Chemical mapping of a 177-nucleotide RNA with DMS and 2A3.

RNA sequence: GGGAACGACUCGAGUAGAGUCGAAAAAUUUAAUAACAAACAAGAGGCCCUAAACGAAUUCGCCAACAAUCCUUUUAAAGUAGAACUCAUACAAGAGCUCCCAGAAGGAGAGAGCAUUACUGCCUACCAUGUAAGCCUAAUUCGUUAGGCUUACAUGAAAAGAAACAACAACAACAAC
Reactivity to DMS in 0.01 (KOAc 150mM, MgCl2 10mM, bicine 150mM(pH8.5), 24C), signal-to-noise 2, nucleotides 027 to 126: a040u020u020u010a130a100u020a080a180c030a130a090a090c050a080a190g010a150g020g010c050c030c050u010a070a070a070c050g000a090a110u020u010c080g000c080c010a020a070c090a090a110u000c030c020u000u000u000u010a040a080a120g020u000a060g010a050a060c050u000c020a090u010a090c180a120a130g020a060g000c020u000c030c040c070a130g020a070a100g010g010a050g020a100g010a110g020c050a020u000u000a050c140u020g010c030c040u000a080c270
Reactivity to 2A3 in 0.01 (KOAc 150mM, MgCl2 10mM, bicine 150mM(pH8.5), 24C), signal-to-noise 1, nucleotides 027 to 126: a000u120u160u090a030a070u100a070a020c030a050a190a010c030a050a130g000a160g170g000c070c050c040u130a060a060a000c010g020a030a080u170u130c070g000c030c000a030a030c000a000a150u030c020c000u000u050u050u050a150a230a000g000u070a050g060a060a050c020u000c030a040u060a230c040a070a030g000a000g070c050u010c070c060c070a030g050a040a010g010g000a030g030a000g000a000g060c000a020u060u090a070c000u000g020c000c020u010a100c010